[RMDB]
This 177-nucleotide RNA was probed chemically with DMS and 2A3. High 2A3 reactivity points to a flexible backbone, as in loops and unpaired stretches. Conditions: 150 mM KOAc, 10 mM MgCl2 and 150 mM bicine (pH 8.5), 24 C. For 2A3, 5,248 sequencing reads were counted. The data come from the RNA Mapping Database (RMDB), library M2PK50. Reactivities are given for positions 27 through 126. For DMS the reverse transcriptase was MarathonRT.
RNA sequence: GGGAACGACUCGAGUAGAGUCGAAAAAGUAUCGGGUUCGCCCGAUACUAGAGCACCACUCCUGCGGGAGAUAAGGCCAAACGCACAGGCGGGUGCAAAGCCAACUCAAGGGUUUCGACCCUUGAAAUCAUUUUAAGGUGUUCGCACCUUAAAAUGAAAAAGAAACAACAACAACAAC
Reactivity to DMS in 0.01 (KOAc 150mM, MgCl2 10mM, bicine 150mM(pH8.5), 24C), signal-to-noise 4, nucleotides 027 to 126: a030g010u000a010u000c000g010g020g020u000u010c180g010c010c000c010g000a000u000a000c000u000a040g000a210g000c020a020c000c010a190c010u000c020c040u000g010c080g030g000g010a220g000a110u000a060a110g010g010c040c030a050a190a110c130g010c090a060c120a070g010g010c110g000g000g000u010g020c010a030a100a130g010c030c040a090a120c150u000c000a000a010g000g000g000u000u000u000c190g010a030c000c000c000u000u000g000a010a110a130
Reactivity to 2A3 in 0.01 (KOAc 150mM, MgCl2 10mM, bicine 150mM(pH8.5), 24C), signal-to-noise 2, nucleotides 027 to 126: a000g000u010a010u010c000g000g060g000u040u060c200g060c070c000c000g000a000u000a000c000u000a000g010a010g020c010a000c020c000a130c000u020c010c000u050g020c180g070g010g010a060g000a070u140a090a050g130g010c020c010a050a060a070c100g000c080a070c020a110g030g020c020g040g000g000u000g000c000a040a010a010g060c010c010a040a040c050u010c020a000a010g060g000g000u010u110u120c180g100a040c000c000c000u010u020g000a010a000a000